Chemical mapping of a 207-nucleotide RNA with DMS and 2A3.
The RNA was probed in 150 mM KOAc, 10 mM MgCl2 and 150 mM bicine (pH 8.5) at 24 C.
The DMS profile rests on 1,880 reads.
DMS (dimethyl sulfate) methylates the pairing face of unpaired adenines and cytosines.
[RMDB]
RNA sequence: GGGAACGACUCGAGUAGAGUCGAAAAACUCGUUCGUACGUGAUCACACGUACACGAGUACGUACUCGUGAUCGUACUCGUGAACACGUUCGUGAGUGUGAUCGAGUGAGUGAUCGAACGAACGUGAGAUCGUGAGUACGUGAACGUUCUCACGAACGGAUCCCUUAAUGUUCGCAUUAAGGGAUCCAAAAGAAACAACAACAACAAC
Reactivity to DMS in 0.01 (KOAc 150mM, MgCl2 10mM, bicine 150mM(pH8.5), 24C), signal-to-noise 1, nucleotides 027 to 156: a060c040u000c000g060u000u000c110g050u000a030c050g030u000g000a150u020c180a180c040a030c000g060u000a060c000a030c000g020a070g020u000a000c070g010u000a080c050u000c010g010u000g000a220u000c010g000u010a020c020u010c030g000u000g000a270a180c010a040c010g000u010u010c030g040u020g020a130g000u010g060u000g000a120u000c050g000a120g040u000g000a170g010u010g000a010u040c020g020a210a090c000g010a030a050c010g050u000g000a090g010a050u000c000g030u000g000a070g010u000a000c040g020u010g000a190a100c040g010u000u000c030u000c000a070c120g000a050a110c110
Reactivity to 2A3 in 0.01 (KOAc 150mM, MgCl2 10mM, bicine 150mM(pH8.5), 24C), signal-to-noise 5, nucleotides 027 to 156: a000c020u010c010g030u150u100c080g000u020a020c020g010u030g080a260u200c130a150c000a010c300g000u000a000c000a000c010g000a000g000u010a030c040g060u070a020c010u000c030g030u030g030a060u040c010g000u040a020c020u000c010g040u020g030a040a020c000a010c000g030u050u030c040g000u010g100a130g070u240g090u140g040a020u010c020g000a070g120u270g080a090g050u210g010a020u030c010g020a010a000c000g010a000a000c000g010u010g000a070g030a070u020c000g000u020g010a000g000u010a010c010g000u030g060a060a010c020g000u010u010c000u010c000a040c060g100a060a020c080

Reactivities are given for positions 27 through 156. It was measured as part of the RMDB library OK3TST.